[RMDB]
RNA sequence: GGGAACGACUCGAGUAGAGUCGAAAAUUCCAACUCCGGCUGGUGUGAAGAAGGAGCCGUUCCACGCAGGACGCGAACAAGACGAAGCCGAAGCAACUUCAGGACGCCGCGCACGAACUGGCGCCCGCAACUCUACUAUGUUCGCAUAGUAGAGUUGAAAAGAAACAACAACAACAAC
Reactivity to 2A3 in 0.01 (KOAc 150mM, MgCl2 10mM, bicine 150mM(pH8.5), 24C), signal-to-noise 3, nucleotides 027 to 126: u050u000c000c010a040a010c010u010c030c020g070g000c030u050g010g070u090g060u080g160a090a160g030a050a070g110g020a020g000c030c010g030u050u010c050c000a130c100g000c060a090g040g040a030c050g010c020g050a050a040c060a120a030g100a010c040g050a060a000g000c010c000g020a010a000g040c030a070a070c000u100u070c030a020g010g000a020c010g010c040c010g010c020g000c040a080c080g060a150a020c060u090g020g000c000g020c000c010c010g000
Reactivity to DMS in 0.01 (KOAc 150mM, MgCl2 10mM, bicine 150mM(pH8.5), 24C), signal-to-noise 4, nucleotides 027 to 126: u010u010c000c000a170a200c050u000c020c030g000g010c050u000g020g030u010g020u010g020a090a090g000a060a100g030g010a120g020c030c010g030u000u000c010c030a100c120g020c110a080g000g000a080c040g010c030g000a050a060c100a070a070g000a070c080g000a110a030g020c030c020g000a050a050g000c120a050a040c100u000u000c080a130g010g010a060c040g000c010c010g000c080g030c060a090c110g010a050a070c070u000g010g000c030g010c010c010c000g000